Structure probing data (2A3 and DMS) for a 177-nucleotide construct. 2A3 is a SHAPE reagent: it acylates the 2'-hydroxyl of flexible nucleotides of all four kinds. Conditions: 150 mM KOAc, 10 mM MgCl2 and 150 mM bicine (pH 8.5), 24 C. For 2A3, 610 sequencing reads were counted.

RNA sequence: GGGAACGACUCGAGUAGAGUCGAAAAGCGGCGCCGCUUGAGCGGAACGAUGCGCGCUACGGGGCGAUUGUCCUUGAGCACCUCGAUUUCCUCGCCGGCGGCAACUCGCCGCAGUACCUCGGCGGUGGCGGUGCCAUACUUUCGAGUAUGGCACCGCAAAAGAAACAACAACAACAAC
Reactivity to 2A3 in 0.01 (KOAc 150mM, MgCl2 10mM, bicine 150mM(pH8.5), 24C), signal-to-noise 2, nucleotides 027 to 126: g080c050g030g010c000g000c000c000g040c040u240u270g020a100g100c000g000g000a000a000c000g050a030u070g100c080g000c000g000c210u050a140c000g000g000g000g000c070g230a290u070u300g000u000c010c000u000u160g020a000g000c000a040c040c000u000c010g300a300u030u040u060c030c090u170c110g030c000c000g020g000c030g030g010c040a050a000c020u010c080g000c010c000g010c000a000g010u070a040c000c000u050c010g000g010c010g050g010u070g000
Reactivity to DMS in 0.01 (KOAc 150mM, MgCl2 10mM, bicine 150mM(pH8.5), 24C), signal-to-noise 1, nucleotides 027 to 126: g010c010g000g000c010g020c000c000g150c010u030u000g000a200g000c160g000g020a010a020c000g060a010u000g000c300g050c080g000c050u000a080c100g000g010g000g050c000g010a220u050u060g000u010c000c000u000u000g000a160g010c050a050c020c000u020c020g040a300u070u000u000c080c020u010c030g000c120c000g000g000c000g000g020c120a020a040c200u050c140g000c010c040g130c000a010g050u000a080c030c000u070c060g000g000c050g000g000u100g000